About this RNA:
Structure probing data (DMS and 2A3) for a 177-nucleotide construct. Values are in units of 0.01, from 0 to 300, in steps of 10. For DMS, 1,445 sequencing reads were counted. Reactivities are given for positions 27 through 126. The RNA was probed in 150 mM KOAc, 10 mM MgCl2 and 150 mM bicine (pH 8.5) at 24 C. The data come from the RNA Mapping Database (RMDB), library M2PK50. The 2A3 profile rests on 2,647 reads. For DMS the reverse transcriptase was MarathonRT.
[RMDB]
RNA sequence: GGGAACGACUCGAGUAGAGUCGAAAACGCCAGCGAUUCGUCGCUGGCGAAAUAAAUUCAGCGGUUUAAAUUUCGUCCGCAUAACCGCUGAUGCGGACGAUAAAAGGCAGUUGUUCGCAACUGCCAACCCUCUAUUCCAGUUCGCUGGAAUAGAGGGAAAAGAAACAACAACAACAAC
Reactivity to DMS in 0.01 (KOAc 150mM, MgCl2 10mM, bicine 150mM(pH8.5), 24C), signal-to-noise 1, nucleotides 027 to 126: c030g060c000c000a010g040c020g000a030u000u000c160g000u000c010g030c000u000g010g020c000g000a000a010a050u010a080a090a080u000u000c020a020g020c020g020g000u000u030u000a050a080a130u000u020u010c040g000u010c010c000g010c010a000u000a040a100c030c070g000c060u000g010a030u000g000c000g020g000a020c020g000a060u000a010a050a090a090g000g000c000a010g000u000u000g030u000u000c110g010c010a000a000c000u000g000c000c000a030a020
Reactivity to 2A3 in 0.01 (KOAc 150mM, MgCl2 10mM, bicine 150mM(pH8.5), 24C), signal-to-noise 2, nucleotides 027 to 126: c010g010c020c010a010g010c010g020a020u010u080c120g040u000c000g100c000u000g000g030c000g000a000a020a000u000a000a010a040u130u060c030a010g000c030g070g090u030u210u300a050a170a140u090u220u120c040g000u010c000c000g000c000a010u020a050a050c020c010g000c020u010g000a000u020g000c010g010g020a000c010g000a000u090a070a150a040a050g000g020c000a000g000u010u010g040u040u120c180g020c110a010a000c000u000g000c000c000a000a030